The data come from the RNA Mapping Database (RMDB), library M2PK50. Chemical mapping of a 177-nucleotide RNA with DMS and 2A3.
RNA sequence: GGGAACGACUCGAGUAGAGUCGAAAACCGCACUUCUUCGGAAGUGCGGAAAUACCGAGAUUGUUCCUCGGUAGAAGUACAUAACCCUUGGAAACAAGGGAAAAAGCGUGAGCUUCGGCUCACGCAACCAAAUACUUGAGUUCGCUCAAGUAUUUGGAAAAGAAACAACAACAACAAC
Reactivity to DMS in 0.01 (KOAc 150mM, MgCl2 10mM, bicine 150mM(pH8.5), 24C), signal-to-noise 4, nucleotides 027 to 126: c000c000g020c000a000c000u000u000c000u000u030c170g030g010a020a010g020u000g020c000g000g000a010a040a090u010a000c010c000g000a010g000a090u010u010g000u010u010c050c010u000c010g000g010u000a020g000a070a110g000u010a070c190a080u010a100a100c000c000c000u000u000g000g000a190a090a180c010a000a000g000g010g010a010a010a060a130a060g010c000g010u000g000a010g010c010u000u000c200g030g000c000u000c000a000c000g020c010a000a020
Reactivity to 2A3 in 0.01 (KOAc 150mM, MgCl2 10mM, bicine 150mM(pH8.5), 24C), signal-to-noise 3, nucleotides 027 to 126: c000c000g000c000a020c010u000u010c000u040u040c080g150g010a000a000g000u000g000c000g000g000a030a000a000u000a000c000c000g000a000g000a080u160u210g030u200u150c010c000u000c000g010g000u010a030g030a160a010g080u130a050c040a100u180a140a140c000c000c000u000u000g010g010a030a040a020c010a000a000g000g000g010a080a030a000a010a010g010c000g000u000g010a000g010c000u040u060c290g060g000c010u000c000a000c000g000c000a000a000
Description: The RNA was probed in 150 mM KOAc, 10 mM MgCl2 and 150 mM bicine (pH 8.5) at 24 C. DMS (dimethyl sulfate) methylates the pairing face of unpaired adenines and cytosines. The 2A3 profile rests on 5,612 reads.